[RMDB]
RNA sequence: GGGAACGACUCGAGUAGAGUCGAAAAAGCGAUACCUCCCAGCGCGGUGAUAACCGUUUUGUGCGCGUGAGCUGGGAUGAAGCCCUCGACAUGUUCUAUGAAGAACUGGAACGCGUGCAGAAAACUCACGGUACUAGCGCUUCGGCGCUAGUACCGUAAAAGAAACAACAACAACAAC
Reactivity to 2A3 in 0.01 (KOAc 150mM, MgCl2 10mM, bicine 150mM(pH8.5), 24C), signal-to-noise 1, nucleotides 027 to 126: a000g120c080g040a020u030a000c000c030u000c000c000c000a040g000c020g000c020g100g040u040g120a250u110a220a090c000c070g000u120u000u000u000g010u000g000c000g000c000g000u100g150a020g000c020u060g000g000g000a000u070g000a020a000g020c000c000c010u020c000g080a000c070a090u300g030u000u000c000u010a110u270g260a090a200g000a000a000c000u000g130g080a090a000c000g000c020g000u000g000c040a000g070a050a050a030a000c080u140c010